[RMDB]
RNA sequence: GGGAACGACUCGAGUAGAGUCGAAAAACUAUUGUCAGUGCCAGGCGGGAACCAGUGGCAAGAAUUGCGAGGUCAAUGUGAACGAAUGCCACAGUAAUCCCUGCAACAAUGGUGCCACCUGCAUCGAAACGCAUACACAUUUCGAUGUGUAUGCGUUAAAAGAAACAACAACAACAAC
Reactivity to 2A3 in 0.01 (KOAc 150mM, MgCl2 10mM, bicine 150mM(pH8.5), 24C), signal-to-noise 3, nucleotides 027 to 126: a000c080u080a060u080u080g090u060c100a080g090u020g110c040c050a020g000g010c040g020g020g010a010a010c010c000a050g010u010g000g000c000a020a010g090a050a040u060u050g040c090g150a100g060g170u190c040a070a080u100g060u090g090a080a020c050g050a130a050u050g020c040c000a000c000a000g010u010a000a090u040c020c010c010u060g000c020a050a040c020a070a010u060g040g000u000g040c010c000a060c000c020u010g010c020a040u090c030g030a090
Reactivity to DMS in 0.01 (KOAc 150mM, MgCl2 10mM, bicine 150mM(pH8.5), 24C), signal-to-noise 3, nucleotides 027 to 126: a040c070u000a080u010u020g000u010c110a060g060u000g000c120c050a080g000g030c120g010g000g020a130a040c060c030a090g030u010g010g020c000a020a070g020a120a080u000u010g000c040g030a150g000g010u000c090a060a080u010g000u010g030a030a110c110g000a210a130u000g010c030c000a020c020a080g000u000a060a120u000c010c000c000u000g010c030a060a040c090a060a060u000g010g000u000g000c030c040a090c080c030u000g000c080a060u000c110g000a070

Chemical mapping of a 177-nucleotide RNA with 2A3 and DMS. The data come from the RNA Mapping Database (RMDB), library OK2TRN. For 2A3, 2,984 sequencing reads were counted. DMS adducts were read by reverse transcription with MarathonRT. Conditions: 150 mM KOAc, 10 mM MgCl2 and 150 mM bicine (pH 8.5), 24 C.